[RMDB]
RNA sequence: GGGAACGACUCGAGUAGAGUCGAAAAAGGUGAUUUCUCCUGCACCUUUAUCAAUGGAGGAACUCGACUUUGCUGUGGGUCCCAAAGGGACCUUAGGUGCAGACAGUUACCGGCGGUGUAGUGUGAGCAUAGGUUCGUGUCUUCGGACACGAACCAAGUGGUUACUAUACUUCGGUAUAGUAACCACAAAAGAAACAACAACAACAAC
Reactivity to 2A3 in 0.01 (KOAc 150mM, MgCl2 10mM, bicine 150mM(pH8.5), 24C), signal-to-noise 3, nucleotides 027 to 156: a000g010g000u020g010a040u070u060u000c030u020c000c000u080g050c000a020c000c010u070u180u120a100u070c060a050a050u150g030g000a020g000g040a050a060c060u050c070g030a020c060u030u040u120g000c030u060g050u130g050g000g000u000c000c000c020a160a120a090g000g020g010a000c000c060u000u030a030g020g010u040g000c000a020g020a120c020a050g030u070u060a050c030c040g030g000c030g020g000u060g030u050a080g000u040g020u020g060a030g020c050a090u110a160g000g000u000u010c000g010u000g000u010c000u000u050c180g070g000a000c000a000c000g000a000a010c000c000a010a010
Reactivity to DMS in 0.01 (KOAc 150mM, MgCl2 10mM, bicine 150mM(pH8.5), 24C), signal-to-noise 1, nucleotides 027 to 156: a050g010g010u000g000a210u000u000u010c010u010c080c010u000g020c040a060c030c020u000u000u090a100u010c120a050a210u000g000g010a180g010g000a040a030c100u010c050g010a120c020u000u020u000g000c020u000g000u020g020g020g020u000c030c020c010a130a070a240g050g020g000a040c000c060u000u000a010g020g020u000g030c000a100g010a120c100a080g030u010u000a070c040c000g020g050c020g030g000u000g000u000a120g050u000g000u010g000a150g000c010a120u000a080g020g010u000u000c000g000u030g000u000c010u000u010c300g000g010a050c010a000c010g010a000a000c000c000a000a060
The record gives the reactivity of an RNA of 207 nucleotides to 2A3 and DMS. The reactions ran in a buffer of 150 mM KOAc, 10 mM MgCl2 and 150 mM bicine (pH 8.5), at 24 C. 2A3 is a SHAPE reagent: it acylates the 2'-hydroxyl of flexible nucleotides of all four kinds. Source: RMDB library M2RFPK, as collected in RNAgym.